This 177-nucleotide RNA was probed chemically with DMS and 2A3. For DMS, 1,711 sequencing reads were counted. Source: RMDB library OK1LIB, as collected in RNAgym.
[RMDB]
RNA sequence: GGGAACGACUCGAGUAGAGUCGAAAACAAAAAGCGUACUACUCGCGAUAGUAGCAAACAAAAAGACUAGCAUUGUCAAGAAUGCCAAACAAAAAGCCUAGUAGUGGCAAGACUACCAAACAACAAAGGGUUAGUAAUACUUCGGUAUUACUAACCCAAAAGAAACAACAACAACAAC
Reactivity to DMS in 0.01 (KOAc 150mM, MgCl2 10mM, bicine 150mM(pH8.5), 24C), signal-to-noise 2, nucleotides 027 to 126: c000a070a210a000a080a010g010c080g000u050a100c010u000a010c020u020c170g020c000g000a110u000a000g000u000a040g000c150a040a060a150c210a030a190a120a070a060g020a040c130u000a220g030c040a000u040u000g000u000c280a040a170g020a000a010u000g000c010c100a050a060a030c140a010a140a040a090a200g030c000c010u000a000g000u000a000g020u040g020g010c060a010a000g000a030c000u020a010c020c300a030a110a060c210a040a080c300a150a040a070
Reactivity to 2A3 in 0.01 (KOAc 150mM, MgCl2 10mM, bicine 150mM(pH8.5), 24C), signal-to-noise 2, nucleotides 027 to 126: c050a000a080a070a050a040g010c020g010u100a020c000u000a000c000u010c070g010c050g150a050u020a010g020u030a000g040c110a120a040a200c090a000a140a080a000a030g090a000c010u080a000g030c000a020u000u010g070u240c050a080a030g120a090a000u020g000c000c010a000a140a070c000a010a060a210a000a000g020c000c030u090a030g030u000a000g020u000g050g020c060a040a000g050a020c000u000a010c000c080a030a050a060c080a080a010c090a080a160a000
Background: Values cover nucleotides 27 to 126.